An RNA of 177 nucleotides, treated with DMS and read out base by base. For DMS the reverse transcriptase was MarathonRT. The RNA was probed in 150 mM KOAc, 10 mM MgCl2 and 150 mM bicine (pH 8.5) at 24 C.
[RMDB]
RNA sequence: GGGAACGACUCGAGUAGAGUCGAAAAAAAAGAUAUGGACCAUGAACUACCUUGUAAGAUUGCCGUUGAAACGGUAUCGGAAACGAUACCGUGGAGGCAAUUUGAGAGGCAUGGUCCUAAGUCAAAAUCUCAACAUUUUGUUCGCAAAAUGUUGAGAAAAAGAAACAACAACAACAAC
Reactivity to DMS in 0.01 (KOAc 150mM, MgCl2 10mM, bicine 150mM(pH8.5), 24C), signal-to-noise 1, nucleotides 027 to 126: a050a080a020a140g010a020u000a180u000g000g000a030c010c000a010u000g000a020a080c060u010a300c030c000u000u000g000u030a300a010g000a000u010u000g030c000c000g000u000u020g000a260a200a020c000g000g000u000a000u020c000g000g010a090a040a070c000g000a020u000a000c000c000g040u000g000g000a040g000g020c010a000a000u000u000u000g000a190g000a020g000g000c000a000u000g000g010u000c000c010u000a010a060g010u020c010a080a100a140a120